[RMDB]
RNA sequence: GGGAACGACUCGAGUAGAGUCGAAAAGCGGCCGUAACUAUAACGGUCCUAAGGUUAAUAGCUAGCCUUAGUAAAACCAAACUAUAUGCGGGAAAACCCUCAAAAGCUUUAAGGUACUCGUUUAGAUAAGUCUAAGCAGUAAAAAUCCUUAAAGAUACGAUAGUGUACCGUUCGCGGUACACUAUCGAAAAGAAACAACAACAACAAC
Reactivity to 2A3 in 0.01 (KOAc 150mM, MgCl2 10mM, bicine 150mM(pH8.5), 24C), signal-to-noise 2, nucleotides 027 to 156: g060c040g020g030c050c010g040u050a090a050c070u090a100u020a200a010c020g000g000u000c000c000u000a000a010g020g000u040u050a100a060u060a300g080c110u030a000g000c010c000u000u000a010g050u100a010a040a020a080c030c010a030a000a050c000u010a030u040a030u250g030c020g000g010g040a050a120a050a110c020c050c040u050c020a130a160a070a070g000c010u010u000u000a010a010g010g000u000a000c010u040c110g030u020u000u000a020g000a020u070a190a000g000u000c000u000a000a000g000c020a010g020u050a030a060a050a030a060u020c000c000u000u010a000a000a000g010a000u070a040
Reactivity to DMS in 0.01 (KOAc 150mM, MgCl2 10mM, bicine 150mM(pH8.5), 24C), signal-to-noise 1, nucleotides 027 to 156: g010c060g060g050c120c000g040u000a130a290c080u010a270u010a110a120c020g060g010u000c030c000u000a000a000g000g000u000u000a060a200u000a210g010c300u030a030g000c030c010u010u020a010g000u000a130a150a060a170c030c070a060a100a240c050u000a110u000a090u000g000c070g000g010g000a190a040a210a140c050c000c000u000c030a050a180a170a290g010c000u000u000u020a010a020g000g010u000a000c010u000c300g020u000u000u000a000g010a090u010a080a180g040u000c010u000a010a000g000c020a010g030u000a040a040a100a000a070u000c010c000u000u000a010a010a040g000a050u000a020